[RMDB]
RNA sequence: GGGAACGACUCGAGUAGAGUCGAAAAGCACAAGACUUCGAACAUUAUAGCAGUUAGUAGUUGCCUAAACCCAUUGCAAUAUAUGGUACAGUAGAGGUCGCAAGCCUAUACUGUGCGGUGAACAUUCAAAAGGGAUGGUACUUCGGUACCAUCCCAACUCCUAGAUUUACUUCGGUAAAUCUAGGAGAAAAGAAACAACAACAACAAC
Reactivity to 2A3 in 0.01 (KOAc 150mM, MgCl2 10mM, bicine 150mM(pH8.5), 24C), signal-to-noise 2, nucleotides 027 to 156: g010c020a000c020a090a090g060a070c020u140u110c100g120a210a050c020a080u160u190a080u200a150g070c060a010g020u000u100a020g020u060a010g010u130u060g060c010c020u130a110a060a050c020c020c020a050u030u160g060c050a140a000u030a000u000a020u180g100g010u030a000c010a000g000u000a000g000a000g050g030u090c030g070c120a030a000g000c000c000u020a030u010a010c010u000g010u010g010c000g000g020u050g050a080a020c020a050u110u280c180a180a100a050a080g000g000g010a000u000g000g000u010a000c000u000u050c160g000g000u000a000c000c000a000u010c000c000c000a000a000
Reactivity to DMS in 0.01 (KOAc 150mM, MgCl2 10mM, bicine 150mM(pH8.5), 24C), signal-to-noise 2, nucleotides 027 to 156: g020c020a050c050a160a140g010a090c010u020u000c040g000a120a130c080a200u000u000a090u000a070g020c070a060g040u010u000a090g020u000a130g000u000u000g000c020c060u000a030a120a190c040c010c000a210u030u000g000c070a120a080u000a110u000a020u000g000g020u000a040c000a040g020u020a020g000a010g100g020u030c090g070c300a130a210g020c010c010u000a010u000a010c010u000g000u000g030c020g000g030u020g000a080a100c090a110u000u020c100a020a100a100a120g000g050g000a050u020g000g070u000a010c000u010u000c250g040g030u000a020c010c010a000u000c000c010c010a000a000
Description
The record gives the reactivity of an RNA of 207 nucleotides to 2A3 and DMS. The RNA was probed in 150 mM KOAc, 10 mM MgCl2 and 150 mM bicine (pH 8.5) at 24 C. It was measured as part of the RMDB library M2RFPK. For 2A3 the reverse transcriptase was SuperScript II with manganese. DMS adducts were read by reverse transcription with MarathonRT.